[RMDB]
The data come from the RNA Mapping Database (RMDB), library M2RFPK. Structure probing data (2A3 and DMS) for a 207-nucleotide construct. For DMS, 2,112 sequencing reads were counted. For DMS the reverse transcriptase was MarathonRT. The 2A3 profile rests on 2,460 reads. The RNA was probed in 150 mM KOAc, 10 mM MgCl2 and 150 mM bicine (pH 8.5) at 24 C.

RNA sequence: GGGAACGACUCGAGUAGAGUCGAAAAAGCGUAGCGGUACGCCGCUACGCAAGGCGCAUUUGAACUGUAUUGUACGCCUUGUAUAAAGCAAAAGUACUAAAAAAACGUGCCGUUACGACGGCACGAAAAAACAUCCAUUGGUUCGCCAAUGGAUGAACAUGUUGUCCUAGUUCGCUAGGACAACAUGAAAAGAAACAACAACAACAAC
Reactivity to 2A3 in 0.01 (KOAc 150mM, MgCl2 10mM, bicine 150mM(pH8.5), 24C), signal-to-noise 3, nucleotides 027 to 156: a000g020c010g000u010a000g000c000g000g000u030a020c170g070c040c000g000c000u000a000c000g000c000a000a000g000g000c000g000c010a060u090u130u270g160a180a070c080u070g050u200a120u150u130g040u040a000c010g000c010c000u000u000g070u010a210u040a070a100a020g060c050a080a030a040a000g110u090a080c120u220a010a040a060a030a010a010a040c000g000u000g010c020c000g000u020u020a080c280g020a000c000g060g000c000a000c000g000a000a000a000a000a000a000c000a000u000c000c000a000u000u010g000g030u020u070c150g020c060c000a000a000u010g000g000a000u000g000a000a000
Reactivity to DMS in 0.01 (KOAc 150mM, MgCl2 10mM, bicine 150mM(pH8.5), 24C), signal-to-noise 1, nucleotides 027 to 156: a140g030c020g090u010a000g010c000g020g030u000a080c230g050c000c010g030c000u010a030c020g000c010a050a000g030g020c020g030c040a070u000u000u010g000a070a230c000u020g050u000a300u020u000g010u000a090c000g010c010c000u010u000g000u000a100u000a070a030a070g030c180a020a090a090a190g020u000a110c070u030a010a010a020a190a040a180a120c010g000u010g020c000c010g040u000u000a150c170g020a080c020g000g000c020a000c000g000a010a040a020a130a060a020c000a000u000c000c000a020u000u000g020g010u000u010c300g030c000c000a000a010u000g000g010a000u000g020a030a100